[RMDB]
RNA sequence: GGGAACGACUCGAGUAGAGUCGAAAAACUUGUAGUAGAUGAUGUGCCGAGUAUCGACUUUUGCUUAAGUCUUGGCGCUAAAUCCCCGACUAGAGCACAAAAAAGACAACUGUUGAGGGACAACACGAGUAACCUAGGUUUUCGAACCUAGGUUACUAAAAGAAACAACAACAACAAC
Reactivity to 2A3 in 0.01 (KOAc 150mM, MgCl2 10mM, bicine 150mM(pH8.5), 24C), signal-to-noise 1, nucleotides 027 to 126: a000c090u080u120g070u130a180g020u040a010g070a200u090g030a060u070g000u010g020c040c010g040a000g070u080a220u200c070g050a080c010u090u120u150u170g170c070u090u130a030a030g040u000c000u060u100g000g040c000g030c010u050a110a100a090u060c040c040c020c020g050a000c010u050a030g000a020g090c090a000c070a050a110a040a040a000a020g060a080c030a090a050c130u010g020u170u030g100a170g030g000g010a010c030a070a000c000a080c090g120
Reactivity to DMS in 0.01 (KOAc 150mM, MgCl2 10mM, bicine 150mM(pH8.5), 24C), signal-to-noise 2, nucleotides 027 to 126: a100c080u000u000g010u000a020g000u000a020g010a060u000g010a160u020g040u010g020c020c010g000a050g020u040a090u010c130g000a050c030u000u010u000u020g010c080u000u020a090a180g000u000c000u010u000g010g010c030g020c040u010a040a150a120u010c020c020c030c050g020a070c100u000a050g000a060g000c040a060c190a010a080a110a010a040a070g020a030c110a070a040c100u010g000u010u000g000a140g010g010g020a090c040a000a030c110a100c220g000
Background:
Conditions: 150 mM KOAc, 10 mM MgCl2 and 150 mM bicine (pH 8.5), 24 C. Structure probing data (2A3 and DMS) for a 177-nucleotide construct. For 2A3, 601 sequencing reads were counted. For DMS the reverse transcriptase was MarathonRT. For DMS, 948 sequencing reads were counted. Source: RMDB library OK2TRN, as collected in RNAgym.